[RMDB]
RNA sequence: GGGAACGACUCGAGUAGAGUCGAAAACGAAACGCUGCUGGAUCAUCUCGGAGAUCCGGGCCCGCAGUUGUGGCACGGAGUCGUUGCUGCGCAGGUAGUCGGCGACGAUGACGUCGCGGUCCAGGCCCCGGAAGGAGAAAUUCGUUUCUCCUUCCGGAAAAGAAACAACAACAACAAC
Reactivity to DMS in 0.01 (KOAc 150mM, MgCl2 10mM, bicine 150mM(pH8.5), 24C), signal-to-noise 2, nucleotides 027 to 126: c040g000a050a060a070c130g010c050u010g020c030u000g010g000a060u010c060a090u060c010u030c090g030g020a160g010a090u030c020c000g000g000g030c030c010c030g080c220a050g000u000u000g020u000g000g000c000a040c020g020g000a270g000u000c020g000u000u000g020c030u000g000c090g000c130a160g000g000u010a050g020u020c030g010g010c020g000a000c000g020a050u020g000a190c050g010u000c050g000c000g010g000u000c040c030a070g000g010c040c040
Reactivity to 2A3 in 0.01 (KOAc 150mM, MgCl2 10mM, bicine 150mM(pH8.5), 24C), signal-to-noise 4, nucleotides 027 to 126: c020g040a030a020a020c050g000c010u030g000c000u050g020g020a070u070c020a120u070c070u030c070g050g010a120g020a110u070c000c000g000g000g000c020c000c000g010c000a060g020u280u260g040u120g020g030c030a010c030g040g020a040g030u040c000g000u010u000g010c000u020g000c040g000c090a120g140g070u230a080g120u150c020g000g010c000g010a000c000g000a030u070g020a050c010g000u020c050g010c030g030g000u000c020c000a040g030g050c000c020